[RMDB]
RNA sequence: GGGAACGACUCGAGUAGAGUCGAAAAGUGAAAGCUCCUUCUCUCGCAAUGUGUAACUCAUGAUUCUCAUGACCCCUGGUUGGAGAGAUACGGACUAGGAGCCAGGGGGCCUCUGAUUCUGCCAGCCAAAACUGUCGUAAGUUCGCUUACGACAGAAGUUCUGCCUAUACUUCGGUAUAGGCAGAACAAAAGAAACAACAACAACAAC
Reactivity to 2A3 in 0.01 (KOAc 150mM, MgCl2 10mM, bicine 150mM(pH8.5), 24C), signal-to-noise 2, nucleotides 027 to 156: g070u080g030a090a050a020g000c010u000c010c010u060u030c020u000c010u000c000g030c140a090a140u080g050u010g010u130a060a070c010u020c050a030u080g070a130u290u030c060u030c060a040u070g060a080c000c000c000c000u010g010g000u030u050g040g020a000g000a000g000a010u050a120c100g050g050a040c030u100a070g080g010a010g000c000c000a000g000g000g000g000g000c000c000u020c020u040g080a140u090u040c010u070g060c040c040a030g020c020c020a070a030a060a100c010u000g000u000c000g000u000a000a000g000u010u070c180g010c120u000u010a000c000g000a010c000a000g010a000a000

The data come from the RNA Mapping Database (RMDB), library M2RFPK.
This 207-nucleotide RNA was probed chemically with 2A3.
Reactivities are given for positions 27 through 156.
2A3 adducts were read by reverse transcription with SuperScript II with manganese.